[RMDB]
RNA sequence: GGGAACGACUCGAGUAGAGUCGAAAAGAUAUGGAUGGUUCCAGAGAGCAAGGCGUGUAGAUGUGGUAUCGGAAACGAUACACACGUCUAUUAUCGCUGAUGACCUCUCUGGAACCAUCCUAAGUCACAUCUAAACCGGGUUCGCCCGGUUUAGAUGAAAAGAAACAACAACAACAAC
Reactivity to DMS in 0.01 (KOAc 150mM, MgCl2 10mM, bicine 150mM(pH8.5), 24C), signal-to-noise 1, nucleotides 027 to 126: g030a090u000a300u020g010g000a020u000g000g000u000u010c010c000a020g040a030g030a020g010c000a130a120g010g020c000g090u000g020u000a000g010a010u010g000u000g010g020u000a010u000c000g010g020a150a120a230c000g000a030u020a010c000a100c010a000c010g040u010c000u010a040u010u030a090u010c020g000c010u000g000a090u000g000a070c300c020u000c000u010c000u010g010g000a030a000c010c000a000u000c000c010u010a000a030g030u000c010a250
An RNA of 177 nucleotides, treated with DMS and read out base by base.
It was measured as part of the RMDB library TTRINS.
DMS (dimethyl sulfate) methylates the pairing face of unpaired adenines and cytosines.
The RNA was probed in 150 mM KOAc, 10 mM MgCl2 and 150 mM bicine (pH 8.5) at 24 C.